[RMDB]
RNA sequence: GGGAACGACUCGAGUAGAGUCGAAAAUAAGAGACGCUGGGUGAUGUACCGAUCAAACGGGAGCUCUACUGAAGCGCGCACGGUAGAGCGAGGAUCGUUUGUGAACGGUAAUCACCUGUGCUGAAGCGCGCACGGCAACCGAAAGGUGCGGAUACAACCCAAUACUAACCUUCGGGUUAGUAUUGGGAAAAGAAACAACAACAACAAC
Reactivity to 2A3 in 0.01 (KOAc 150mM, MgCl2 10mM, bicine 150mM(pH8.5), 24C), signal-to-noise 2, nucleotides 027 to 156: u170a030a020g050a000g030a020c010g000c000u010g020g020g100u000g020a010u020g080u230a010c000c000g020a090u020c000a000a000a000c000g000g000g000a000g000c000u020c000u050a020c000u010g070a190a070g010c000g000c000g000c000a000c000g010g000u000a000g000a000g030c010g000a080g010g000a000u010c010g000u000u000u000g050u020g060a220a070c010g000g010u000a000a000u010c000a000c010c010u000g000u000g010c010u000g030a120a060g000c000g000c000g010c000a010c010g010g000c010a000a000c000c000g080a080a050a050g000g000u020g000c020g010g030a030u090a200c050a090a100